An RNA of 177 nucleotides, treated with 2A3 and DMS and read out base by base. DMS adducts were read by reverse transcription with MarathonRT. Source: RMDB library OK1LIB, as collected in RNAgym. The 2A3 profile rests on 10,810 reads.
[RMDB]
RNA sequence: GGGAACGACUCGAGUAGAGUCGAAAACAACAAAACAAAACAUAGGGGAGUCAGGGUUCGGACCGCCUGCCUGAACCUAGGGUAACACUGACUGUGGAGGGGAAAAGAAAGAAAACAAAACAAAACAAUACUAAUACUAGUUCGCUAGUAUUAGUAUAAAAGAAACAACAACAACAAC
Reactivity to 2A3 in 0.01 (KOAc 150mM, MgCl2 10mM, bicine 150mM(pH8.5), 24C), signal-to-noise 7, nucleotides 027 to 126: c070a030a000c020a000a110a030a010c070a020a110a050a020c050a140u230a080g000g000g020g010a070g060u060c050a040g030g000g000u010u030c020g010g020a030c020c050g060c040c010u050g020c010c000u020g000a020a020c000c010u020a010g050g010g000u030a050a010c080a020c120u090g110a010c030u060g040u080g050g030a160g020g020g020g020a010a080a010a000g130a020a100a000g120a020a110a010a000c110a020a090a020a000c080a010a060a010a000c080a090
Reactivity to DMS in 0.01 (KOAc 150mM, MgCl2 10mM, bicine 150mM(pH8.5), 24C), signal-to-noise 5, nucleotides 027 to 126: c140a110a110c240a110a080a130a110c150a080a070a140a060c140a100u040a090g010g000g020g000a090g010u000c020a050g010g000g010u000u000c040g000g010a060c050c110g000c030c020u020g020c030c000u020g010a060a040c020c000u000a100g000g010g000u000a050a070c180a110c060u020g010a100c060u010g020u020g000g010a090g010g000g000g000a050a060a030a030g000a070a040a050g000a060a050a060a030c220a060a060a030a030c120a060a060a040a070c300a060